The data come from the RNA Mapping Database (RMDB), library M2PK50.
This 177-nucleotide RNA was probed chemically with DMS and 2A3.
For DMS, 4,178 sequencing reads were counted.
DMS adducts were read by reverse transcription with MarathonRT.
Conditions: 150 mM KOAc, 10 mM MgCl2 and 150 mM bicine (pH 8.5), 24 C.
For 2A3, 3,948 sequencing reads were counted.
[RMDB]
RNA sequence: GGGAACGACUCGAGUAGAGUCGAAAAUGAGACACCUUCGGGUGUCUCACAUUAAGCUGACCAGCUAUGAGGUCAAUAUCGUCAUGCACAAAUAGAAUAAUACAGCUUGCUCCUUCGGGAGCAAGAACAAAAAUCCCAUAUUCGUAUGGGAUUUUUGAAAAGAAACAACAACAACAAC
Reactivity to DMS in 0.01 (KOAc 150mM, MgCl2 10mM, bicine 150mM(pH8.5), 24C), signal-to-noise 4, nucleotides 027 to 126: u000g010a030g010a020c000a000c000c000u000u010c190g030g010g030u000g000u000c000u000c000a000c120a080u010u000a080a090g010c090u000g000a090c010c010a150g000c060u000a050u000g000a120g000g000u000c020a050a120u010a070u000c120g010u010c040a030u010g010c050a090c140a050a050a080u000a040g000a100a070u010a050a090u020a100c150a080g000c010u000u000g000c000u000c000c000u000u010c170g020g000g000a010g000c000a000a000g000a040a110
Reactivity to 2A3 in 0.01 (KOAc 150mM, MgCl2 10mM, bicine 150mM(pH8.5), 24C), signal-to-noise 4, nucleotides 027 to 126: u070g000a010g000a000c000a000c010c000u010u090c230g040g000g000u000g000u000c000u000c000a000c000a000u060u050a050a030g020c030u010g000a030c010c000a000g040c020u140a100u140g090a060g020g010u030c050a040a060u140a070u130c090g060u020c050a050u100g010c040a040c050a070a120a020u170a090g150a110a060u190a180a030u130a110c030a030g040c000u000u010g000c000u000c000c030u030u050c140g070g010g020a000g020c000a000a000g000a010a000